[RMDB]
RNA sequence: GGGAACGACUCGAGUAGAGUCGAAAAGAUGUUCGCUGAUUCGUCAGCCGCAUGCCCAGGUGCCCGCGAUCUUCAAGGCUACGGCGCGGAUAGGUCCGCGCUGAUCGUUUUCCUCCAACGACGCUAUAAAAGGAACGAAGGUUCGCCUUCGUUCCAACCUUUACGGUACCUUCGGGUACCGUAAAGGAAAAGAAACAACAACAACAAC
Reactivity to 2A3 in 0.01 (KOAc 150mM, MgCl2 10mM, bicine 150mM(pH8.5), 24C), signal-to-noise 1, nucleotides 027 to 156: g080a020u040g030u150u120c110g020c000u000g000a030u090u080c190g070u010c060a000g010c000c010g000c020a000u040g020c000c020c020a020g080g050u010g030c040c030c040g050c040g030a040u010c020u000u040c020a080a020g020g020c060u110a050c020g000g010c010g000c020g000g020a020u080a240g110g180u010c000c000g000c000g000c000u000g000a000u000c000g000u040u000u130u100c060c080u060c040c030a050a170c030g120a010c010g000c090u100a050u130a300a100a070a040g000g030a010a030c010g010a000a000g000g010u010u050c170g070c000c000u000u000c010g010u010u000c000c000a000a000